[RMDB]
RNA sequence: GGGAACGACUCGAGUAGAGUCGAAAAAUCACGAUAUUGGUGAUCUUGCGUCCCUCGGCAGGCACCAUGGCGCCGUCGGGCGUAUCCUUGUCCGGAAAAUCACCAAGCCUGUCGCGCGCGGUCAAAACAGUAAUAGUGCCUUCGGGCACUAUUACUGAAAAGAAACAACAACAACAAC
Reactivity to DMS in 0.01 (KOAc 150mM, MgCl2 10mM, bicine 150mM(pH8.5), 24C), signal-to-noise 2, nucleotides 027 to 126: a040u000c070a060c070g010a140u000a150u020u000g000g010u010g010a030u010c050u000u030g000c030g000u000c010c010c040u000c060g010g020c000a010g000g020c050a090c140c130a100u000g040g020c050g000c080c090g010u000c140g000g000g000c000g000u000a040u000c050c050u010u010g000u000c110c080g000g010a030a070a100a060u000c040a040c050c030a010a110g000c050c030u010g000u000c030g020c100g000c040g010c030g010g000u000c090a080a080a090a150
Reactivity to 2A3 in 0.01 (KOAc 150mM, MgCl2 10mM, bicine 150mM(pH8.5), 24C), signal-to-noise 1, nucleotides 027 to 126: a000u090c070a030c040g070a060u060a100u300u110g070g000u000g040a080u000c060u050u170g030c000g050u050c030c010c000u010c020g010g000c000a030g080g000c020a030c070c090a110u130g050g050c030g000c010c020g050u050c030g030g010g060c010g010u040a070u040c010c000u140u070g100u110c050c000g020g020a020a030a050a100u090c020a040c020c000a030a000g000c000c000u030g010u030c000g020c000g000c010g000c000g050g030u000c020a020a050a100a130